[RMDB]
RNA sequence: GGGAACGACUCGAGUAGAGUCGAAAAGUAGAUGCUCAUCCCACUUAUUAUGAUAGCCUGGUUUUUAUAGCCAAUUUAGCUUCAUAAACCCAGGGAUGACGCAGAGCCGAUUUUAGGGUGCCUAUUGCCUAGAUUCAAUGUUCGCAUUGAAUCUAGGAAAAGAAACAACAACAACAAC
Reactivity to 2A3 in 0.01 (KOAc 150mM, MgCl2 10mM, bicine 150mM(pH8.5), 24C), signal-to-noise 3, nucleotides 027 to 126: g030u050a020g030a230u070g000c010u000c000a000u000c000c010c000a020c000u040u040a030u050u010a000u040g030a060u090a060g010c020c020u020g060g050u040u020u020u040u180a250u140a060g000c000c000a020a010u090u140u150a030g010c010u000u000c010a010u010a020a080a050c000c010c040a010g010g000g010a010u000g000a010c050g000c010a010g020a020g050c040c020g110a140u060u070u050u220a130g040g040g050u060g000c010c000u130a150u100u200g070
Reactivity to DMS in 0.01 (KOAc 150mM, MgCl2 10mM, bicine 150mM(pH8.5), 24C), signal-to-noise 4, nucleotides 027 to 126: g020u000a130g020a180u010g020c010u000c000a010u000c010c000c000a180c090u010u000a160u000u010a020u000g000a030u010a010g030c000c200u000g000g020u010u000u000u010u030a100u010a090g020c000c010a040a130u010u000u010a130g010c010u000u000c010a000u010a010a010a220c060c070c090a160g000g010g000a000u000g010a020c160g010c000a110g000a230g010c010c000g010a120u010u000u010u020a100g010g000g010u010g010c050c040u000a090u000u000g020